[RMDB]
This 177-nucleotide RNA was probed chemically with DMS and 2A3. The RNA was probed in 150 mM KOAc, 10 mM MgCl2 and 150 mM bicine (pH 8.5) at 24 C. The DMS profile rests on 1,012 reads. The data come from the RNA Mapping Database (RMDB), library OK2TRN. High DMS reactivity at an A or C suggests that its Watson-Crick edge is free. 2A3 adducts were read by reverse transcription with SuperScript II with manganese. Values are in units of 0.01, from 0 to 300, in steps of 10.

RNA sequence: GGGAACGACUCGAGUAGAGUCGAAAAAGAAUGGUUCAGUGGGCCUAUGAUCAUAAUUAUGUUGAAGAAUCAGUUAUAGCAUAUCAUUAUGCAUGUAUUGCAAAUGAAGAUAGCAAUGCUGCUGCUACCUGCUGAUACCUUUCGAGGUAUCAGCAGGAAAAGAAACAACAACAACAAC
Reactivity to DMS in 0.01 (KOAc 150mM, MgCl2 10mM, bicine 150mM(pH8.5), 24C), signal-to-noise 1, nucleotides 027 to 126: a060g010a120a000u050g040g020u000u000c070a070g010u000g020g000g000c020c070u000a050u010g000a120u000c050a040u020a060a080u000u000a100u010g020u010u000g000a110a090g010a060a130u000c050a050g010u030u020a090u000a040g020c010a060u000a020u000c090a040u000u000a030u000g000c000a020u000g020u000a070u030u010g000c000a060a010a080u020g000a050a080g000a100u000a090g000c030a050a060u000g000c060u000g010c080u000g020c110u000a080
Reactivity to 2A3 in 0.01 (KOAc 150mM, MgCl2 10mM, bicine 150mM(pH8.5), 24C), signal-to-noise 1, nucleotides 027 to 126: a000g170a000a060u000g020g050u060u040c090a030g050u170g020g070g000c060c020u020a060u050g050a020u000c030a020u000a280a080u190u260a120u120g090u050u120g040a240a080g030a110a080u070c020a010g010u060u060a080u120a150g030c010a050u120a020u080c010a020u000u200a040u110g000c000a010u150g030u070a110u130u030g030c000a020a020a070u170g030a070a000g040a120u050a020g030c000a000a050u040g040c030u020g030c000u000g010c010u000a080